[RMDB]
RNA sequence: GGGAACGACUCGAGUAGAGUCGAAAAGGCAGCCAUCGUGUCACGCAUGCAGAUUUUUAUCGCCGUCCGAUGUACGGACCCGUAUGCGACACCGGAUCUUCAACGACGACGGCGACGAGGACCUUGUCUUCGUUAUGGGCUGGGGCAACCGCUGGACGUAGACCGUCAGGUUCGCCUGACGGUCUACAAAAGAAACAACAACAACAAC
Reactivity to 2A3 in 0.01 (KOAc 150mM, MgCl2 10mM, bicine 150mM(pH8.5), 24C), signal-to-noise 1, nucleotides 027 to 156: g070g000c030a030g000c040c020a050u030c050g040u020g060u070c020a020c130g030c000a030u160g050c040a030g000a150u120u050u010u100u270a140u080c010g000c030c000g020u060c000c000g030a040u240g030u070a030c040g000g000a000c000c020c000g020u060a080u270g070c030g020a020c060a020c050c000g010g030a060u000c040u050u050c110a080a050c090g220a040c020g000a000c000g030g010c000g010a000c000g010a020g010g000a010c060c140u090u150g020u040c000u020u060c020g080u000u080a160u290g080g000g000c000u010g010g000g030g000c000a000a110c020c010g050c040u080g030g010a050c060